[RMDB]
RNA sequence: GGGAACGACUCGAGUAGAGUCGAAAACUCACUUUCGAGUGAGAACAGGGAUAUGGAGAGUUGUCAGUCGUGAAGUGGCGUUGAAAUCGGAAACGAUGGAGCCAUGGAGGCGACUUGGAUUUACUCUCCUAAGUCAUAAUCGCAGCUUCGGCUGCAAUCACAUACAUAUUUUCGAAUAUGUAUGUGAAAAAGAAACAACAACAACAAC
Reactivity to 2A3 in 0.01 (KOAc 150mM, MgCl2 10mM, bicine 150mM(pH8.5), 24C), signal-to-noise 8, nucleotides 027 to 156: c000u010c000a000c010u090u130u150c280g070a020g010u010g000a020g020a080a050c110a120g100g070g020a040u050a050u190g020g000a000g000a000g010u000u040g020u020c020a010g000u010c010g060u100g130a050a010g010u000g010g000c030g160u250u050g010a020a010a000u000c000g000g040a070a050a050c010g000a000u010g010g020a000g000c010c000a000u010g010g010a050g140g180c010g020a000c000u010u040g020g010a000u140u110u130a020c000u000c010u000c000c000u000a000a000g000u000c010a010u130a180a070u180c130g000c010a000g000c000u070u140c250g140g000c010u000g000c000a000a020
Reactivity to DMS in 0.01 (KOAc 150mM, MgCl2 10mM, bicine 150mM(pH8.5), 24C), signal-to-noise 4, nucleotides 027 to 156: c010u000c000a030c020u000u000u010c170g020a060g050u010g010a040g010a090a120c060a150g020g010g020a130u000a270u000g000g010a050g010a070g050u010u000g020u000c030a030g010u000c000g010u010g010a300a300g000u010g000g020c010g020u020u010g000a040a160a080u000c010g030g010a200a120a270c030g000a030u010g020g000a300g000c000c000a020u000g020g010a300g000g020c000g000a020c010u000u000g020g000a060u000u010u000a030c010u000c000u000c000c010u000a010a030g020u000c030a160u000a090a120u000c060g010c010a010g030c020u000u000c300g020g010c010u010g030c000a030a040

The data come from the RNA Mapping Database (RMDB), library RNAMAK. The record gives the reactivity of an RNA of 207 nucleotides to 2A3 and DMS. The DMS profile rests on 7,681 reads.